[RMDB]
Structure probing data (2A3 and DMS) for a 177-nucleotide construct. The 2A3 profile rests on 1,299 reads. Values are in units of 0.01, from 0 to 300, in steps of 10.
RNA sequence: GGGAACGACUCGAGUAGAGUCGAAAAAGUCUAAAGAGGCGUGCUUUACCAAGUCAUGGUUUAGUGCGAAGCCCUCUUGACAAUGCAGUCCUUUACAGAAAUAUCCAAUGUAUAGGCUGUUAGGCUGGAUAGGGUAUCACUUCGGUGAUACCCUAUCAAAAGAAACAACAACAACAAC
Reactivity to 2A3 in 0.01 (KOAc 150mM, MgCl2 10mM, bicine 150mM(pH8.5), 24C), signal-to-noise 1, nucleotides 027 to 126: a000g010u000c010u040a070a000a000g020a000g000g010c010g000u000g000c000u010u020u000a000c000c020a090a110g220u200c050a200u090g010g000u000u030u000a040g000u000g030c030g050a110a030g080c010c000c010u050c000u000u010g010a020c050a000a030u060g000c000a000g000u210c000c000u000u000u030a000c020a010g210a140a190a070u150a090u110c050c030a030a080u050g000u010a000u000a010g000g010c000u000g000u050u010a020g020g030c020u070g040
Reactivity to DMS in 0.01 (KOAc 150mM, MgCl2 10mM, bicine 150mM(pH8.5), 24C), signal-to-noise 2, nucleotides 027 to 126: a030g020u000c010u020a050a040a010g000a010g010g010c010g020u000g020c000u010u000u000a000c000c010a080a190g030u010c270a160u010g000g010u000u000u000a000g020u010g000c020g010a130a030g010c300c000c010u000c000u000u010g000a060c090a090a110u000g000c010a000g000u010c000c010u010u010u000a000c010a040g010a060a130a200u000a090u010c180c220a060a130u000g000u000a020u000a020g020g030c000u010g000u000u010a020g010g000c030u000g010